[RMDB]
RNA sequence: GGGAACGACUCGAGUAGAGUCGAAAACUGCAGCACCUGAUCACUGAUGGCUCAACGGUAUCCGGCGGUACAACUGAAUACUUGUAGCUGCCUUUUGAGCGGGUUGGCUGCAAUCCGAAACGGAGAGAAAACCUAAUUACGUUCGCGUAAUUAGGAAGAUACGUGUGGAGUUCGCUCCACACGUAUCAAAAGAAACAACAACAACAAC
Reactivity to 2A3 in 0.01 (KOAc 150mM, MgCl2 10mM, bicine 150mM(pH8.5), 24C), signal-to-noise 5, nucleotides 027 to 156: c020u030g000c010a000g000c000a010c010c000u010g020a050u020c010a000c040u030g010a020u040g070g000c010u030c060a050a040c040g030g000u020a030u030c030c020g010g010c030g140g120u280a090c070a070a020c080u050g010a030a030u020a020c000u030u140g020u090a010g020c020u010g010c000c000u070u050u040u180g010a010g000c050g020g000g000u100u070g150g000c000u000g000c010a000a020u000c010c000g040a160a140a120c160g020g020a070g000a010g060a080a100a040a040c000c000u000a000a000u000u000a000c020g010u010u050c250g000c010g130u000a000a000u000u000a000g020g000a020a000
Reactivity to DMS in 0.01 (KOAc 150mM, MgCl2 10mM, bicine 150mM(pH8.5), 24C), signal-to-noise 2, nucleotides 027 to 156: c040u020g000c020a030g030c010a120c000c000u000g020a020u000c000a070c070u010g030a030u000g000g020c010u000c000a080a050c030g010g000u000a010u000c010c010g030g030c020g060g040u010a130c130a210a030c020u010g020a000a040u000a040c010u000u000g000u000a060g020c010u010g000c010c030u000u000u000u010g000a030g020c000g000g010g020u000u000g040g020c030u010g010c000a020a030u000c000c020g010a040a130a160c080g000g020a100g010a270g010a080a070a090a100c010c010u000a000a010u000u000a020c000g010u000u000c300g000c010g050u000a000a010u000u000a000g000g020a000a010
Overview:
This 207-nucleotide RNA was probed chemically with 2A3 and DMS. For DMS, 3,290 sequencing reads were counted. It was measured as part of the RMDB library M2RFPK. 2A3 adducts were read by reverse transcription with SuperScript II with manganese.